[RMDB]
RNA sequence: GGGAACGACUCGAGUAGAGUCGAAAAAUUCGUUGGAUGAAUGUGAGGCAUUGGAUUGAUUUCGUUCAAUCCGAGCCCUACAUUCAUCCGGGGUUUGUAAACUUAGCCAAACUUCGGUUUGGCUAAGGUUUGUGUCCAACUUCGGUUGGACACAAACAAAAGAAACAACAACAACAAC
Reactivity to DMS in 0.01 (KOAc 150mM, MgCl2 10mM, bicine 150mM(pH8.5), 24C), signal-to-noise 1, nucleotides 027 to 126: a020u000u000c000g000u000u000g030g010a000u010g000a010a000u000g000u000g000a040g000g010c010a160u010u010g000g010a030u000u000g010a020u000u020u000c260g000u000u000c000a000a000u010c000c000g000a010g000c010c000c010u000a000c000a010u000u000c010a000u000c000c000g030g000g000g010u000u000u000g010u000a040a060a300c010u000u000a000g010c000c000a000a000a010c000u000u000c210g020g000u000u000u000g000g000c000u000a000a000g020
Reactivity to 2A3 in 0.01 (KOAc 150mM, MgCl2 10mM, bicine 150mM(pH8.5), 24C), signal-to-noise 1, nucleotides 027 to 126: a000u130u070c050g040u050u180g030g010a000u000g000a010a000u010g010u030g010a050g060g000c300a300u020u060g010g040a020u000u000g040a020u000u240u300c150g060u050u000c050a000a000u000c000c020g000a000g020c000c020c000u020a010c000a000u020u020c000a000u020c010c010g000g000g000g000u020u090u060g090u210a170a140a060c010u010u010a010g000c000c000a000a020a010c020u060u110c270g090g030u000u000u000g010g020c020u020a000a000g000